[RMDB]
RNA sequence: GGGAACGACUCGAGUAGAGUCGAAAAGAAAGAAAGAAAGGUGAUGCAGAUGAUGACUGCAUAGUUCAGCAGAAACUCCAUGUAGAACACAGAGCAAUGUCUUUCGCUCCUAGCUGAUGCAUCACAAGCAUCACCCGGAAUUCGUUCCGGGUGAUGCAAAAGAAACAACAACAACAAC
Reactivity to 2A3 in 0.01 (KOAc 150mM, MgCl2 10mM, bicine 150mM(pH8.5), 24C), signal-to-noise 3, nucleotides 027 to 126: g030a030a030a000g090a060a070a000g070a120a120a000g120g000u000g000a000u000g000c030a000g010a030u060g030a020u110g050a120c010u040g000c020a000u020a000g030u000u020c040a150g020c050a020g180a160a030a030c000u100c060c010a050u040g010u030a000g060a250a030c040a000c020a070g050a000g040c020a120a050u180g110u080c000u050u150u120c080g000c020u020c010c000u010a040g000c020u010g060a080u020g020c000a000u010c000a000c000a010a000
Reactivity to DMS in 0.01 (KOAc 150mM, MgCl2 10mM, bicine 150mM(pH8.5), 24C), signal-to-noise 2, nucleotides 027 to 126: g000a060a020a010g030a030a110a030g000a070a220a070g000g000u000g010a030u000g030c010a080g000a140u000g000a110u030g040a300c060u000g020c090a000u010a040g000u000u010c090a240g090c220a080g010a070a080a020c020u010c120c200a070u000g000u000a030g000a020a120c030a030c030a030g030a060g000c020a050a110u020g030u000c020u000u010u000c040g000c120u000c010c040u000a070g030c010u000g030a110u000g000c000a030u000c010a010c090a140a110